[RMDB]
RNA sequence: GGGAACGACUCGAGUAGAGUCGAAAAGAUAUGGAGCCAGUAUUACGAUGAGUCCCGGGUCGGAAACGACCCGGACGAGUAACUGGCUCCUAAGUCAAAGUGGUACGACCUUCGGGUCGUACCACAACAUCCAUGUACGGUUCGCCGUACAUGGAUGAAAAGAAACAACAACAACAAC
Reactivity to 2A3 in 0.01 (KOAc 150mM, MgCl2 10mM, bicine 150mM(pH8.5), 24C), signal-to-noise 2, nucleotides 027 to 126: g000a000u020a010u030g010g020a000g010c000c000a020g040u130a250u300u060a010c060g180a280u280g020a060g000u040c110c150c070g050g020g000u000c030g000g020a010a000a010c020g000a010c030c030c020g010g000a000c000g000a000g000u010a000a020c010u000g000g000c030u000c000c010u000a000a000g000u030c020a100a020a120g000u000g000g000u010a000c010g020a020c000c000u050u130c300g050g000g020u000c000g010u000a000c000c010a000c000a000a000
Reactivity to DMS in 0.01 (KOAc 150mM, MgCl2 10mM, bicine 150mM(pH8.5), 24C), signal-to-noise 1, nucleotides 027 to 126: g010a000u000a000u020g000g000a020g000c010c000a010g010u020a170u000u000a020c000g020a230u020g000a150g010u000c060c060c130g010g000g010u010c000g000g010a000a000a020c000g020a010c000c020c010g010g010a000c000g010a010g020u000a030a030c000u000g000g000c010u000c000c000u000a000a100g000u000c000a090a080a180g020u000g000g000u000a000c000g010a020c000c000u000u030c250g020g010g020u000c020g000u020a000c000c000a010c000a010a110

Structure probing data (2A3 and DMS) for a 177-nucleotide construct. The reactions ran in a buffer of 150 mM KOAc, 10 mM MgCl2 and 150 mM bicine (pH 8.5), at 24 C. The DMS profile rests on 2,356 reads.